[RMDB]
Overview: This 207-nucleotide RNA was probed chemically with 2A3. The data come from the RNA Mapping Database (RMDB), library OK3TST. The 2A3 profile rests on 1,680 reads. Conditions: 150 mM KOAc, 10 mM MgCl2 and 150 mM bicine (pH 8.5), 24 C.
RNA sequence: GGGAACGACUCGAGUAGAGUCGAAAACGAUCUGUUCGCAGAUCGAGCUACGGAGACGUAGCAAAGCACGCGAGACCUCCGGCGCGUGCAAUACCGGAAUUAAGACCAGAUCCACGUGUGCUAGGAUCUGGCGGAGGUCAAAGAUACAGCACACGAAGUACAGACUCGAAUUCGUUCGAGUCUGUACAAAAGAAACAACAACAACAAC
Reactivity to 2A3 in 0.01 (KOAc 150mM, MgCl2 10mM, bicine 150mM(pH8.5), 24C), signal-to-noise 1, nucleotides 027 to 156: c020g000a000u000c010u000g010u000u050c170g030c040a000g000a000u000c010g000a020g030c000u010a000c000g040g000a030g000a030c000g000u000a000g020c010a000a000a050g020c000a000c010g000c000g010a000g020a070c000c000u000c000c000g020g000c000g000c000g010u000g000c000a000a000u010a020c000c010g020g040a030a020u070u050a150a050g020a050c000c000a020g000a000u000c000c000a050c090g000u010g010u020g000c000u000a030g020g010a000u020c000u020g000g040c010g010g000a000g000g000u000c000a010a130a000g100a020u140a140c090a010g000c000a000c000a000c030g060a130a000